[RMDB]
RNA sequence: GGGAACGACUCGAGUAGAGUCGAAAACAUUCUUGAAAAAGUGAUGUAGAUUUAUAGCCCAUAACUUUUUUGAAUUACAUCGACGAUACGGCGCCGAAAGAAAAAUAAAUAGACCGUAUGAAAGAAAAAAACAACAGUAGCUUCGGCUACUGUUGAAGACUAACAAAUACUUCGGUAUUUGUUAGUCAAAAGAAACAACAACAACAAC
Reactivity to 2A3 in 0.01 (KOAc 150mM, MgCl2 10mM, bicine 150mM(pH8.5), 24C), signal-to-noise 1, nucleotides 027 to 156: c000a020u010u000c000u010u080g000a040a100a070a070a070g020u040g000a000u020g050u080a030g030a210u040u250u190a110u120a130g030c000c000c000a010u120a090a100c030u090u100u100u110u120u110g130a090a070u170u010a120c010a130u010c010g010a010c000g030a010u000a000c010g000g040c020g000c020c040g070a040a040a040g130a080a110a000a060a000u080a050a050a030u030a030g040a010c000c000g000u000a000u030g040a040a070a120g060a060a040a000a000a000a000a020c000a000a020c010a000g000u000a010g000c000u070u040c210g020g020c010u000a000c000u000g010u000u000g000a000a000